About this RNA
Conditions: 150 mM KOAc, 10 mM MgCl2 and 150 mM bicine (pH 8.5), 24 C. Structure probing data (2A3 and DMS) for a 177-nucleotide construct. 2A3 adducts were read by reverse transcription with SuperScript II with manganese. Source: RMDB library OK2TRN, as collected in RNAgym.

[RMDB]
RNA sequence: GGGAACGACUCGAGUAGAGUCGAAAAGGAUGCAGCGUAGUCAUAACUGUGACUGCCUCGUGUACAGUUACGCAUGACUAGACAAGGUGUCAUCGUACACGAGGAUGACGUCUUGUAAGCUGCAUCGCUACUUGUUUGUAUUCGUACAGACAAGUAGAAAAGAAACAACAACAACAAC
Reactivity to 2A3 in 0.01 (KOAc 150mM, MgCl2 10mM, bicine 150mM(pH8.5), 24C), signal-to-noise 9, nucleotides 027 to 126: g060g000a000u000g000c000a000g000c020g060u050a000g010u020c010a020u060a240a080c110u200g010u020g040a010c010u020g020c000c010u070c050g170u170g030u040a060c020a030g000u030u030a030c040g010c040a010u020g010a020c010u030a050g030a190c010a030a020g050g000u020g010u010c000a010u010c020g070u120a050c120a040c120g100a050g070g000a000u010g010a000c000g010u010c000u020u030g020u030a070a040g000c000u000g000c000a000u000c000g000
Reactivity to DMS in 0.01 (KOAc 150mM, MgCl2 10mM, bicine 150mM(pH8.5), 24C), signal-to-noise 9, nucleotides 027 to 126: g010g000a010u000g010c000a010g010c010g020u000a020g010u000c010a020u000a090a100c180u010g020u000g010a020c010u000g010c070c020u000c140g010u000g010u000a160c010a040g010u000u000a020c060g020c210a030u000g000a030c010u000a070g010a070c050a020a030g010g010u000g000u000c010a010u000c020g010u000a040c140a060c180g000a040g010g000a010u000g000a020c040g010u000c010u000u000g010u000a110a120g010c000u000g000c000a000u000c000g010